[RMDB]
Chemical mapping of a 177-nucleotide RNA with 2A3. The 2A3 profile rests on 1,501 reads. 2A3 adducts were read by reverse transcription with SuperScript II with manganese.

RNA sequence: GGGAACGACUCGAGUAGAGUCGAAAAUUCACAACCACAAAAAAUAAUCCACCCUUGAGUUAGUGGCUCAGGUGGAUUAUUCGUCCAAUCGGCCGAUCCCUUGCAGGGAUCCGAGCUAUUGUUUGACGCUCCCUAAUCAGUUCGCUGAUUAGGGAGCAAAAGAAACAACAACAACAAC
Reactivity to 2A3 in 0.01 (KOAc 150mM, MgCl2 10mM, bicine 150mM(pH8.5), 24C), signal-to-noise 2, nucleotides 027 to 126: u140u100c050a030c040a120a100c030c010a120c130a080a120a040a020a000a000u000a000a000u000c010c000a010c010c040c080u040u080g000a000g010u020u100a070g040u100g300g000c010u010c000a000g000g000u000g030g000a000u010u000a000u010u000c000g000u000c010c000a020a040u110c070g020g000c000c010g000a000u010c010c000c010u030u120g100c110a070g000g000g040a010u000c010c020g020a040g000c000u000a020u000u080g000u020u050u120g020a020c050